[RMDB]
RNA sequence: GGGAACGACUCGAGUAGAGUCGAAAAGGUAAAAUCUUGGAUAUUCGUGGCGUCGACAUUGUUACUUGCAAGAAUCUCCAGCCCAACGAUACACCCGUGAUUGUGGUGAGCUGUCGUGCCCAGGAAGUACACUUGUACAGAAAGGCUAAAACCGGUGUGCUAGACAAUACUUCGGUAUUGUCUAGCAAAAAGAAACAACAACAACAAC
Reactivity to DMS in 0.01 (KOAc 150mM, MgCl2 10mM, bicine 150mM(pH8.5), 24C), signal-to-noise 2, nucleotides 027 to 156: g050g010u000a080a010a060a050u000c030u000u010g010g010a080u000a130u020u000c050g050u000g030g040c030g010u000c000g030a020c000a000u000u000g050u000u000a050c110u000u010g020c020a050a060g050a120a050u000c030u000c040c010a190g020c020c000c050a080a050c040g030a120u000a160c040a030c010c010c020g010u020g020a180u000u000g010u010g020g000u000g000a070g030c060u010g040u000c040g070u010g020c020c020c020a180g020g010a060a110g010u000a090c060a100c120u000u000g020u000a060c000a040g050a030a060a050g030g040c000u000a020a020a060a060c110c020g000g000u000g000
Reactivity to 2A3 in 0.01 (KOAc 150mM, MgCl2 10mM, bicine 150mM(pH8.5), 24C), signal-to-noise 2, nucleotides 027 to 156: g040g010u070a080a050a010a030u060c000u010u010g020g000a070u050a300u060u040c030g010u040g080g050c050g080u080c050g050a040c010a040u040u060g020u030u060a110c060u010u010g000c010a000a010g000a110a030u030c030u000c050c010a020g010c000c020c020a020a020c030g020a020u060a040c010a020c000c000c010g050u090g150a180u080u140g020u140g090g010u020g010a040g010c050u080g000u000c010g010u030g040c040c010c010a010g000g050a000a050g060u050a010c120a010c040u150u240g040u030a010c010a010g010a000a020a000g020g000c000u010a000a020a030a010c050c020g000g060u000g010